[RMDB]
RNA sequence: GGGAACGACUCGAGUAGAGUCGAAAAGGGCAUAUCUUCGGAUAUGCCCAAACCUCGAAAAGGAAAAGUCGCAUGCGUCGAUCGAACAACGUCGCAUGCGACAAACUCGGAGGUUCGCCUCCGAGAAUCACCUUCUAAAGUUCGCUUUAGAAGGUGAAAAAGAAACAACAACAACAAC
Reactivity to 2A3 in 0.01 (KOAc 150mM, MgCl2 10mM, bicine 150mM(pH8.5), 24C), signal-to-noise 2, nucleotides 027 to 126: g000g000g000c010a000u010a000u000c020u040u040c170g040g010a010u000a000u000g010c000c010c000a010a000a000c010c000u020c020g060a020a020a010a010g080g020a090a060a000a040g000u000c000g020c010a000u000g000c000g000u010c010g040a160u090c130g040a110a080c050a060a080c100g000u000c000g010c010a000u010g000c000g000a000c000a000a000a000c000u000c000g000g000a010g020g030u020u040c190g090c020c000u000c000c010g010a010g000a000a010
Reactivity to DMS in 0.01 (KOAc 150mM, MgCl2 10mM, bicine 150mM(pH8.5), 24C), signal-to-noise 3, nucleotides 027 to 126: g000g020g000c000a010u000a000u000c010u000u000c200g030g000a030u000a000u000g000c000c000c010a000a040a060c010c010u010c030g000a020a040a040a060g020g000a070a090a120a130g000u000c010g000c000a000u000g000c010g020u000c010g000a070u030c170g000a120a110c300a110a090c000g010u000c010g000c000a000u000g020c000g000a000c000a000a050a120c000u000c000g000g000a020g010g000u010u010c230g010c000c000u000c000c000g000a000g000a040a100